[RMDB]
Structure probing data (2A3) for a 207-nucleotide construct. Reactivities are given for positions 27 through 156. The reactions ran in a buffer of 150 mM KOAc, 10 mM MgCl2 and 150 mM bicine (pH 8.5), at 24 C. For 2A3 the reverse transcriptase was SuperScript II with manganese.

RNA sequence: GGGAACGACUCGAGUAGAGUCGAAAACCUCACUACAUUUUACUGUUCCUAAAGAAUUUGUGACAGGUACAGUAAAACGUAUUGCAAGGUUUAUCAGUUCCUAUAAACAGGUAAAUAACAGUAUAUGAAAAGCAAAGACUGUUCGCAGUCUUUGCAACUUUGCUUGACAGUUCGCUGUCAAGCAAAGAAAAGAAACAACAACAACAAC
Reactivity to 2A3 in 0.01 (KOAc 150mM, MgCl2 10mM, bicine 150mM(pH8.5), 24C), signal-to-noise 2, nucleotides 027 to 156: c000c000u000c000a000c020u020a020c010a020u000u000u000u000a010c000u000g000u030u030c020c000u100a140a220a050g070a270a290u200u180u230g120u070g070a090c040a100g010g000u000a000c000a000g000u010a000a000a000a000c000g010u010a010u000u020g020c050a030a050g050g000u000u020u020a190u140c040a030g010u030u010c000c020u020a110u100a050a070a020c050a040g000g140u060a090a150a050u110a130a020c000a030g110u050a080u050a070u230g090a090a020a030a000g000c000a000a000a000g000a000c000u010g060u050u030c160g000c040a000g010u010c000u000u000u000g000c060a000a000